This 207-nucleotide RNA was probed chemically with 2A3 and DMS. The 2A3 profile rests on 1,525 reads. For DMS, 1,397 sequencing reads were counted. It was measured as part of the RMDB library OK3TST. Values cover nucleotides 27 to 156. DMS (dimethyl sulfate) methylates the pairing face of unpaired adenines and cytosines. Conditions: 150 mM KOAc, 10 mM MgCl2 and 150 mM bicine (pH 8.5), 24 C.

RNA sequence: GGGAACGACUCGAGUAGAGUCGAAAAGAUAAUGACCAUGAUGCAGCUAAUAAUGCUACUGAAGAGGAAGAGGAUUACAACAUUGAUGACAUAGAAUUUGAGCUUUAGAUGUCCAUUUAAGGCAAACUUCCACCCAAAUAACAGCAUACUGCAAACCACUCCUUAGGGAGUUCGCUCCCUAAGGAGUAAAAGAAACAACAACAACAAC
Reactivity to 2A3 in 0.01 (KOAc 150mM, MgCl2 10mM, bicine 150mM(pH8.5), 24C), signal-to-noise 3, nucleotides 027 to 156: g040a000u090a020a060u070g100a020c000c000a000u140g070a070u080g040c020a000g040c040u040a130a020u140a170a040u180g030c000u010a080c070u090g060a070a040g060a130g060g010a010a050g020a030g100g010a040u060u110a090c080a160a020c010a130u010u200g040a080u070g000a090c020a050u080a050g070a030a020u180u060u250g020a030g020c000u050u040u030a040g000a080u050g060u010c100c050a010u030u050u100a040a040g020g000c010a010a050a050c020u030u000c020c000a050c030c010c010a000a140a030u160a020a040c020a000g000c030a010u040a060c020u060g000c020a000a090a040c020c050
Reactivity to DMS in 0.01 (KOAc 150mM, MgCl2 10mM, bicine 150mM(pH8.5), 24C), signal-to-noise 1, nucleotides 027 to 156: g000a060u010a080a150u000g010a200c010c030a180u000g040a220u000g000c010a000g080c020u070a050a110u010a030a140u000g000c020u000a080c020u000g050a080a150g000a160g000g010a070a030g010a060g000g000a130u000u020a140c010a130a030c030a060u000u010g000a170u030g030a080c060a100u000a080g020a030a110u000u000u020g000a180g030c030u000u000u000a040g000a060u030g040u040c000c090a120u000u000u020a070a050g000g000c050a000a030a080c070u000u000c000c000a110c050c030c000a000a030a090u000a110a150c000a070g000c090a100u000a110c010u000g000c000a000a060a180c060c050